An RNA of 177 nucleotides, treated with 2A3 and read out base by base.
RNA sequence: GGGAACGACUCGAGUAGAGUCGAAAAUGGUGUGAUCGCCUUUGCCGAUAUUGGUGAUCAGUGCACUGUAUUGGUUUUGCAGGAUAUCCUGCAAUUCACAGCAGUGAACGGUACGACCAAUAAUACACCAGGCUAGCAUGUUCGCAUGCUAGCCUGGAAAAGAAACAACAACAACAAC
Reactivity to 2A3 in 0.01 (KOAc 150mM, MgCl2 10mM, bicine 150mM(pH8.5), 24C), signal-to-noise 1, nucleotides 027 to 126: u090g000g000u000g070u080g060a110u150c030g000c000c000u020u020u070g140c050c020g000a060u020a060u060u100g000g010u050g050a040u050c060a060g040u020g020c020a000c000u000g000u020a170u210u000g000g000u000u050u010u000g010c010a000g000g080a180u040a120u300c020c000u050g000c030a010a000u000u000c010a010c010a010g050c010a020g030u080g000a000a000c020g010g060u130a060c040g110a010c050c080a000a000u130a070a060u140a010c040a040

About this RNA
The reactions ran in a buffer of 150 mM KOAc, 10 mM MgCl2 and 150 mM bicine (pH 8.5), at 24 C.